[RMDB]
RNA sequence: GGGAACGACUCGAGUAGAGUCGAAAAUGACAAGGUCAAGGUAGCACUGAGAGGAAGUCGGUGCAGAGGUAGGAUUCCGACUCAGGUCUGGGGUCUCAUGCUGAUGUUCUUGCCAUUAGUCAGACUCGAAUCGCUGACAAUUCGUUGUCAGCGAUUCAAAAGAAACAACAACAACAAC
Reactivity to DMS in 0.01 (KOAc 150mM, MgCl2 10mM, bicine 150mM(pH8.5), 24C), signal-to-noise 2, nucleotides 027 to 126: u010g000a040c010a050a090g010g010u000c020a030a150g040g020u000a090g000c020a020c060u000g000a050g010a150g000g040a090a110g000u000c020g000g010u010g000c010a070g000a110g000g040u010a070g010g000a130u000u000c010c030g000a030c000u000c210a090g020g000u010c020u010g010g000g000g000u000c000u000c050a090u010g010c000u010g010a250u000g010u000u000c020u010u000g000c020c000a050u000u010a120g020u000c080a100g020a130c060u000c080
Reactivity to 2A3 in 0.01 (KOAc 150mM, MgCl2 10mM, bicine 150mM(pH8.5), 24C), signal-to-noise 2, nucleotides 027 to 126: u010g000a000c030a040a050g020g000u200c020a030a000g060g000u030a010g030c010a000c040u030g010a020g010a050g170g230a170a070g110u030c020g000g000u000g000c020a020g000a020g060g030u080a040g030g020a000u050u000c000c010g000a020c010u020c080a120g000g180u010c090u200g000g000g000g000u000c000u020c040a100u130g000c030u040g010a070u090g060u110u030c000u040u010g000c000c000a080u020u030a020g000u030c040a000g020a050c010u030c050
The record gives the reactivity of an RNA of 177 nucleotides to DMS and 2A3. High DMS reactivity at an A or C suggests that its Watson-Crick edge is free. It was measured as part of the RMDB library OK2TRN. The DMS profile rests on 1,495 reads. 2A3 is a SHAPE reagent: it acylates the 2'-hydroxyl of flexible nucleotides of all four kinds. The 2A3 profile rests on 3,092 reads. Values cover nucleotides 27 to 126.